[RMDB]
RNA sequence: GGGAACGACUCGAGUAGAGUCGAAAAGUAGGGUAGUCAAACUUUCAAAAGGACGUAAGUAUAAAAUGAAGUUCGAAUCUUUUAGAGACUAAGGACUUAAAAAACUUAGAACCGUAUCUUCUUUAGGGAUGAGAAUGUUGUUCGCAACAUUCUCAUCAAAAGAAACAACAACAACAAC
Reactivity to DMS in 0.01 (KOAc 150mM, MgCl2 10mM, bicine 150mM(pH8.5), 24C), signal-to-noise 3, nucleotides 027 to 126: g020u010a040g010g010g020u010a040g000u010c060a070a100a120c040u010u030u010c100a080a080a070a150g000g010a060c070g000u010a040a030g000u020a020u070a050a050a130a110u030g010a040a050g000u000u020c010g000a160a180u000c000u030u000u030u040a120g010a070g010a070c040u010a080a160g010g000a030c040u000u020a000a070a070a080a030a030c030u010u000a030g000a040a110c080c020g000u000a050u010c040u000u000c010u000u000u000a100g010g000
Reactivity to 2A3 in 0.01 (KOAc 150mM, MgCl2 10mM, bicine 150mM(pH8.5), 24C), signal-to-noise 5, nucleotides 027 to 126: g090u090a040g000g020g060u020a040g030u070c040a030a080a110c030u040u100u090c050a080a100a060a070g060g030a020c090g010u010a020a040g030u020a040u080a190a090a060a090u220g110a060a000g010u000u020c040g020a020a050u000c020u020u110u070u180a190g040a000g010a070c030u020a020a080g000g000a000c000u040u020a000a150a030a030a030a000c030u020u000a000g020a140a000c010c000g040u070a070u030c050u070u000c000u020u120u060a220g090g070